An RNA of 177 nucleotides, treated with 2A3 and DMS and read out base by base. For DMS the reverse transcriptase was MarathonRT. The DMS profile rests on 12,717 reads. It was measured as part of the RMDB library OK2TST.
RNA sequence: GGGAACGACUCGAGUAGAGUCGAAAAGGUGGGGCAGCAGCUGCCGCCAGCAACCUGGUCCCGCCCGGAGCAGCAGCUGGUCAGCCCGGACUCUGCCAGGGCCAUGGAGGAGGGCACGCCACCAGACGGAUAGAUUAUCUUUCGAGAUAAUCUAUCCAAAAGAAACAACAACAACAAC
Reactivity to 2A3 in 0.01 (KOAc 150mM, MgCl2 10mM, bicine 150mM(pH8.5), 24C), signal-to-noise 5, nucleotides 027 to 126: g030g000u030g000g010g020g020c020a030g010c040a020g030c080u050g030c010c020g040c010c000a000g030c020a020a080c020c010u030g020g160u050c040c020c000g050c030c030c030g020g010a070g010c010a000g000c000a010g000c010u020g010g040u060c020a020g040c010c010c010g030g110a060c020u020c020u050g030c040c040a070g000g050g000c040c010a120u160g030g010a030g010g010a030g010g000g020c050a030c090g030c010c010a030c020c000a040g050a040c080
Reactivity to DMS in 0.01 (KOAc 150mM, MgCl2 10mM, bicine 150mM(pH8.5), 24C), signal-to-noise 9, nucleotides 027 to 126: g010g020u000g000g010g010g020c020a070g020c090a120g010c080u000g020c030c050g000c020c030a060g010c070a090a120c230c020u000g010g000u000c010c020c090g000c130c090c090g000g010a110g010c010a050g020c130a180g010c010u000g000g010u000c080a150g010c040c000c010g000g000a200c020u000c020u000g010c040c050a110g000g010g000c060c120a070u010g010g000a060g000g000a280g010g000g010c030a070c100g000c000c010a050c020c020a150g000a140c200